[RMDB]
RNA sequence: GGGAACGACUCGAGUAGAGUCGAAAAAAGAAACAGCAGCCAUUGACAUGCUCAGUCAUCUCUGCUUGCAAUUGAUAAGGAGCUGUAAGGGGCACUAGCCAUAGGUGUGCUUAGCAAUCACUGGUUAAAAUGCACUACUGUUCGCAGUAGUGCAUUUAAAAGAAACAACAACAACAAC
Reactivity to DMS in 0.01 (KOAc 150mM, MgCl2 10mM, bicine 150mM(pH8.5), 24C), signal-to-noise 4, nucleotides 027 to 126: a060a050g010a120a040a060c070a060g000c090a070g020c030c030a080u000u010g020a020c090a100u000g020c020u000c070a060g010u000c030a040u000c020u000c030u010g000c040u000u010g010c090a060a110u010u010g020a120u000a120a120g000g000a060g020c060u000g000u000a080a070g000g010g010g020c040a060c100u010a070g010c040c040a050u010a050g010g010u000g010u000g010c030u000u000a060g010c040a040a130u000c040a070c050u000g010g000u010u000a080
Reactivity to 2A3 in 0.01 (KOAc 150mM, MgCl2 10mM, bicine 150mM(pH8.5), 24C), signal-to-noise 2, nucleotides 027 to 126: a020a000g130a030a070a000c050a000g070c010a010g010c030c020a030u010u070g030a020c050a110u070g040c020u010c030a010g010u010c010a080u040c030u010c010u030g090c030u020u060g030c050a110a170u090u120g060a040u070a180a140g120g000a040g030c010u020g070u200a090a120g110g000g000g000c040a020c090u080a040g060c020c010a030u050a040g010g010u030g030u070g030c000u050u020a010g000c000a000a000u050c010a010c040u000g000g000u050u030a060